[RMDB]
RNA sequence: GGGAACGACUCGAGUAGAGUCGAAAAGAUAUGGACGGAAUGUGGGAGAAGGUCGGAAACGAUUUCUUCGACGAUCACACCGUCCUAAGUCAAAACAUGUGGUCCCCGUUCGCGGGGACCACAUGAACAAUCACCCAAUGUUCGCAUUGGGUGAUUGAAAAGAAACAACAACAACAAC
Reactivity to DMS in 0.01 (KOAc 150mM, MgCl2 10mM, bicine 150mM(pH8.5), 24C), signal-to-noise 3, nucleotides 027 to 126: g000a040u000a300u000g010g000a000c000g010g010a080a090u000g030u000g000g010g010a120g000a030a020g000g010u000c010g030g020a080a140a170c000g000a010u000u010u010c000u000u000c000g020a080c210g000a050u020c020a020c030a030c020c010g020u000c000c000u030a000a080g000u000c040a080a110a130a160c010a010u000g020u000g010g000u000c000c000c000c000g050u010u010c180g020c000g030g000g000g000a000c000c010a000c010a000u000g000a070a140
Reactivity to 2A3 in 0.01 (KOAc 150mM, MgCl2 10mM, bicine 150mM(pH8.5), 24C), signal-to-noise 2, nucleotides 027 to 126: g020a020u060a030u130g010g000a000c020g030g000a300a300u150g010u010g020g000g020a040g010a020a020g010g030u020c010g040g000a070a100a050c030g020a030u300u200u170c040u000u010c010g230a300c030g010a050u040c010a000c000a000c000c010g010u010c000c000u020a010a010g020u000c040a000a020a110a170c000a000u010g000u020g000g000u010c000c000c000c040g050u080u130c300g000c030g030g000g030g000a000c000c000a010c000a010u010g000a000a000